About this RNA: An RNA of 177 nucleotides, treated with DMS and 2A3 and read out base by base. The RNA was probed in 150 mM KOAc, 10 mM MgCl2 and 150 mM bicine (pH 8.5) at 24 C. 2A3 adducts were read by reverse transcription with SuperScript II with manganese. The data come from the RNA Mapping Database (RMDB), library RFMREP. For DMS the reverse transcriptase was MarathonRT.

RNA sequence: GGGAACGACUCGAGUAGAGUCGAAAACGCCCCGCAGGCGGUGCGUCAUCCCGGGGCUGCAAUGGUUUCGACGGGGCAUGAGGAGGGUGACUGAAGCCUGCUCGGUCAGAGCGAACCCGUAACAGCGCCGAGCUGUAGGGUUCGCCCUACAGCUCGGAAAAGAAACAACAACAACAAC
Reactivity to DMS in 0.01 (KOAc 150mM, MgCl2 10mM, bicine 150mM(pH8.5), 24C), signal-to-noise 2, nucleotides 027 to 126: c120g010c000c020c020c070g020c080a130g000g020c030g060g010u010g010c060g000u000c060a190u010c030c000c000g030g020g000g040c060u000g010c090a080a060u010g010g000u000u000u000c030g010a080c040g010g020g000g030c070a050u010g000a080g000g000a070g010g020g010u000g000a060c070u010g000a090a180g010c020c020u010g000c020u010c020g000g000u000c050a060g010a070g050c010g000a060a070c030c010c020g010u000a120a140c070a080g010c070g000
Reactivity to 2A3 in 0.01 (KOAc 150mM, MgCl2 10mM, bicine 150mM(pH8.5), 24C), signal-to-noise 2, nucleotides 027 to 126: c020g010c000c020c010c020g020c040a090g100g120c040g040g070u060g010c020g040u000c000a070u030c020c010c020g000g000g020g000c040u050g000c020a090a180u100g010g060u000u040u080c050g020a030c060g120g000g000g050c060a080u150g040a030g060g060a040g020g040g020u070g040a060c060u050g040a080a010g050c000c000u010g000c000u010c010g020g060u070c040a030g010a020g130c000g020a030a030c000c010c000g010u040a070a020c000a030g040c010g000